[RMDB]
RNA sequence: GGGAACGACUCGAGUAGAGUCGAAAAAGCCUUGCACCAGAACCACUACCAAAAACGUUUAGAAGAACUUUGGAGAGUUCCUUCUUAAUUUUUUGACAGUCCCUCCUAGAUACUUUCACAGUCUAGGUUCUCAAACGAAUUUCGAUUCGUUUGAGAAAAAAGAAACAACAACAACAAC
Reactivity to DMS in 0.01 (KOAc 150mM, MgCl2 10mM, bicine 150mM(pH8.5), 24C), signal-to-noise 2, nucleotides 027 to 126: a130g000c020c020u000u000g020c040a010c000c040a100g010a110a080c070c050a110c050u000a110c070c070a060a000a030a030a020c240g020u000u010u000a030g010a030a060g000a050a010c010u000u000u030g040g020a110g000a060g010u000u000c140c020u000u000c020u000u000a030a030u010u000u000u000u000u010g000a100c160a110g000u010c000c000c010u000c010c000u000a010g000a030u020a020c120u010u040u020c070a090c120a110g010u000c010u010a020g000g000
Reactivity to 2A3 in 0.01 (KOAc 150mM, MgCl2 10mM, bicine 150mM(pH8.5), 24C), signal-to-noise 5, nucleotides 027 to 126: a000g030c010c000u020u050g020c020a030c020c010a020g030a080a030c020c010a020c030u060a050c000c030a010a010a030a020a040c050g010u010u030u040a020g000a020a000g010a000a010c030u090u140u270g230g100a240g010a000g090u020u000c050c010u020u000c000u010u050a030a030u010u020u020u020u020u000g060a040c030a040g070u040c000c010c010u040c010c000u000a010g010a020u070a110c040u100u180u210c080a050c050a060g010u000c020u000a010g040g000
An RNA of 177 nucleotides, treated with DMS and 2A3 and read out base by base. The reactions ran in a buffer of 150 mM KOAc, 10 mM MgCl2 and 150 mM bicine (pH 8.5), at 24 C. Reactivities are given for positions 27 through 126. For DMS the reverse transcriptase was MarathonRT. Source: RMDB library RFM100, as collected in RNAgym. The DMS profile rests on 3,298 reads.